[RMDB]
RNA sequence: GGGAACGACUCGAGUAGAGUCGAAAAUAUACCAUAUGAUUAUUCGCUGUUACACUGCGGCUUUCUCAGGAUUGUCAUGGUGGAUGGCUAAAUUAUAACUUAAAUCCUCAUUCCGCUCAACUCUUCGACCCUGUAGAAAGUUCGCUUUCUACAGGGUAAAAGAAACAACAACAACAAC
Reactivity to 2A3 in 0.01 (KOAc 150mM, MgCl2 10mM, bicine 150mM(pH8.5), 24C), signal-to-noise 1, nucleotides 027 to 126: u080a000u020a050c030c000a040u070a050u150g020a040u040u110a070u170u130c040g010c040u020g030u030u040a080c020a010c000u020g000c000g000g000c000u000u060u070c030u000c040a120g160g000a050u060u010g040u000c010a020u030g040g000u000g000g030a010u030g030g000c030u010a000a060a020u120u050a090u010a070a040c010u030u100a050a090a160u030c020c010u040c020a100u090u040c020c010g070c030u020c030a030a130c000u000c000u060u010c000g000
Reactivity to DMS in 0.01 (KOAc 150mM, MgCl2 10mM, bicine 150mM(pH8.5), 24C), signal-to-noise 1, nucleotides 027 to 126: u020a110u020a220c070c040a290u000a060u010g000a060u010u000a050u010u000c180g010c020u000g010u000u000a130c030a030c000u010g000c140g000g000c000u020u000u020c010u000c170a150g030g000a030u000u000g020u000c010a070u000g020g060u000g000g030a050u000g000g010c030u000a020a060a050u000u000a060u010a030a120c100u000u000a070a060a130u000c030c020u000c060a050u000u000c050c070g000c030u000c110a030a070c110u000c000u010u000c240g010

Overview:
An RNA of 177 nucleotides, treated with 2A3 and DMS and read out base by base. Conditions: 150 mM KOAc, 10 mM MgCl2 and 150 mM bicine (pH 8.5), 24 C. The data come from the RNA Mapping Database (RMDB), library RFMREP. For DMS, 798 sequencing reads were counted. For 2A3 the reverse transcriptase was SuperScript II with manganese.